This 207-nucleotide RNA was probed chemically with DMS and 2A3.
The reactions ran in a buffer of 150 mM KOAc, 10 mM MgCl2 and 150 mM bicine (pH 8.5), at 24 C.
For DMS the reverse transcriptase was MarathonRT.
RNA sequence: GGGAACGACUCGAGUAGAGUCGAAAAGGAUUGCUCGUGUCUGUCUGCGGGUCUUACCAUUUAACGAGCUACGUUUAACUACUUACCUUAAUAGUUAGAAAUAAGAUUCUUAGGUUAGUUUUGAUAGUUUAGCCCUGUUAUAUGGCGUUUUAUCAAAGAUGAUAAUCGUGUUCGCACGAUUAUCAUCAAAAGAAACAACAACAACAAC
Reactivity to DMS in 0.01 (KOAc 150mM, MgCl2 10mM, bicine 150mM(pH8.5), 24C), signal-to-noise 1, nucleotides 027 to 156: g040g020a050u000u000g010c010u010c040g010u000g010u000c010u000g020u000c040u010g020c050g020g000g030u000c050u010u000a070c030c010a060u030u010u010a040a030c030g000a030g000c030u010a030c110g000u000u000u000a020a040c020u000a040c010u010u000a080c040c030u000u000a050a090u000a090g010u000u010a090g010a050a060a120u000a080a170g000a300u000u010c040u000u020a080g000g020u000u010a030g010u000u020u010u030g000a060u010a070g010u000u000u000a050g050c000c000c040u020g010u010u000a040u000a020u000g020g020c040g010u020u000u000u020a090u000c070a070a090a260
Reactivity to 2A3 in 0.01 (KOAc 150mM, MgCl2 10mM, bicine 150mM(pH8.5), 24C), signal-to-noise 2, nucleotides 027 to 156: g090g020a040u000u080g000c000u010c010g000u030g040u010c070u070g050u010c040u110g130c040g050g010g000u020c090u070u110a070c010c000a030u070u120u020a010a010c010g000a010g000c020u020a010c040g010u000u040u060a020a020c010u040a010c000u020u050a020c010c000u130u070a050a080u040a240g080u060u080a030g090a070a170a090u150a060a050g090a230u080u020c020u050u030a000g000g000u030u060a010g000u020u000u070u020g030a030u070a050g030u020u050u090a010g000c000c030c080u040g040u120u020a090u000a010u060g030g000c020g020u000u000u110u030a070u070c020a020a000a010